Annotation
Chemical mapping of a 177-nucleotide RNA with 2A3 and DMS. The reactions ran in a buffer of 150 mM KOAc, 10 mM MgCl2 and 150 mM bicine (pH 8.5), at 24 C. In probing experiments dimethyl sulfate is read out at A N1 and C N3, which are open when not base-paired. Reactivities are given for positions 27 through 126. For 2A3 the reverse transcriptase was SuperScript II with manganese. The data come from the RNA Mapping Database (RMDB), library TTRDEL.

RNA sequence: GGGAACGACUCGAGUAGAGUCGAAAAGAUAUGGAUCUGAACUACGAGGAUGUAGAGCGACGAUCUCGGAAACGAGGGAGCUCUACUGACUCGCAGAUCCUAAGUCAAAUCUCCGUUCGCGGAGAAAGACCUGUCAUUAGUUCGCUAAUGACAGGUCAAAAGAAACAACAACAACAAC
Reactivity to 2A3 in 0.01 (KOAc 150mM, MgCl2 10mM, bicine 150mM(pH8.5), 24C), signal-to-noise 2, nucleotides 027 to 126: g020a010u090a070u150g000g020a010u020c000u010g010a110a150c130u130a080c300g000a010g030g000a020u080g010u010a000g000a000g020c010g300a300c030g000a040u040c000u000c000g010g040a090a050a070c010g000a000g020g000g030a000g000c000u010c000u000a000c000u000g000a000c000u000c000g000c010a000g000a000u000c010c010u010a110a000g000u000c020a010a070a230u030c010u000c020c000g000u010u080c300g000c020g090g010a010g020a060a020a010
Reactivity to DMS in 0.01 (KOAc 150mM, MgCl2 10mM, bicine 150mM(pH8.5), 24C), signal-to-noise 2, nucleotides 027 to 126: g010a040u010a300u010g000g030a010u000c000u000g070a090a090c140u020a300c040g010a000g010g010a180u000g010u020a010g000a020g000c000g000a060c220g020a060u000c000u000c010g000g000a100a080a110c000g000a010g010g000g010a030g000c000u000c000u000a000c000u000g000a300c000u010c000g010c000a020g000a010u000c000c000u000a010a090g020u010c030a020a080a140u000c000u000c010c000g030u000u000c180g020c010g000g000a000g000a000a070a080